[RMDB]
RNA sequence: GGGAACGACUCGAGUAGAGUCGAAAAGAUAUGGAUGAGAGGGAGAAGGUGUCGGAAACGACACACUUCAUCGAUCUCUAUCCUAAGUCAAAAGCUUGACUUGGAAGUUCGCUUCCAAGUCAAGCAACGAUCUUAACAAGUUCGCUUGUUAAGAUCGAAAAGAAACAACAACAACAAC
Reactivity to DMS in 0.01 (KOAc 150mM, MgCl2 10mM, bicine 150mM(pH8.5), 24C), signal-to-noise 5, nucleotides 027 to 126: g000a030u010a300u000g000g000a010u000g000a030g000a020g000g020g000a040g010a010a020g010g010u000g010u000c000g020g000a090a070a220c000g010a020c000a010c010a050c010u000u000c000a160u000c080g000a080u010c000u000c000u010a060u000c000c000u010a060a130g010u010c040a100a080a140a120g000c000u000u000g000a010c010u000u000g000g000a020a020g010u000u010c270g010c000u000u000c000c000a010a000g000u000c000a000a000g000c000a020a030
Reactivity to 2A3 in 0.01 (KOAc 150mM, MgCl2 10mM, bicine 150mM(pH8.5), 24C), signal-to-noise 4, nucleotides 027 to 126: g020a020u090a020u140g000g010a010u080g160a030g000a000g070g120g000a040g010a010a010g020g000u010g000u000c010g010g020a060a050a050c010g000a010c000a040c050a130c010u010u010c010a270u150c010g050a060u000c010u000c020u010a010u000c000c000u020a130a040g070u040c040a090a050a100a000g000c010u000u000g000a000c010u000u000g000g020a010a020g010u080u160c260g080c130u000u000c000c010a010a010g000u000c000a000a000g000c000a000a000
The data come from the RNA Mapping Database (RMDB), library TTRDEL. An RNA of 177 nucleotides, treated with DMS and 2A3 and read out base by base. The DMS profile rests on 8,273 reads. For DMS the reverse transcriptase was MarathonRT.